[RMDB]
RNA sequence: GGGAACGACUCGAGUAGAGUCGAAAAUAGCGGUCGGUCACCACGGCGCCGCGCCGAUUCCACCGCCGACGCCCGACGAUGUGCACGGUGUGCACGGCGAAUGCAUUGGCGGUGCGCACCACCGAGCCUUUCGUAUUCGCUUCGGCGAAUACGAAAGAAAAGAAACAACAACAACAAC
Reactivity to 2A3 in 0.01 (KOAc 150mM, MgCl2 10mM, bicine 150mM(pH8.5), 24C), signal-to-noise 4, nucleotides 027 to 126: u200a000g060c030g030g000u090c060g010g020u040c080a030c140c040a080c070g040g000c020g000c060c020g090c040g000c010c010g020a040u160u000c010c010a030c010c000g000c000c020g030a030c030g010c000c020c030g100a080c020g040a090u130g020u060g050c040a020c150g120g070u150g000u010g070c020a010c020g060g010c020g040a120a030u150g020c070a100u060u170g040g000c030g020g010u020g010c030g010c000a010c000c000a020c020c000g010a010g060c010
Reactivity to DMS in 0.01 (KOAc 150mM, MgCl2 10mM, bicine 150mM(pH8.5), 24C), signal-to-noise 2, nucleotides 027 to 126: u080a140g000c030g000g090u000c050g030g000u010c060a140c140c210a120c130g000g020c080g030c000c040g000c120g000c000c040g040a120u000u030c160c040a000c030c030g000c030c010g000a030c050g000c010c110c020g040a150c090g000a180u030g010u000g000c040a030c060g000g020u070g000u000g000c000a000c000g070g000c020g000a300a060u030g000c050a060u000u070g090g020c000g000g020u000g000c020g000c090a060c060c000a050c010c020g000a300g000c060
Structure probing data (2A3 and DMS) for a 177-nucleotide construct.
It was measured as part of the RMDB library OK1LIB.
The 2A3 profile rests on 2,511 reads.
The reactions ran in a buffer of 150 mM KOAc, 10 mM MgCl2 and 150 mM bicine (pH 8.5), at 24 C.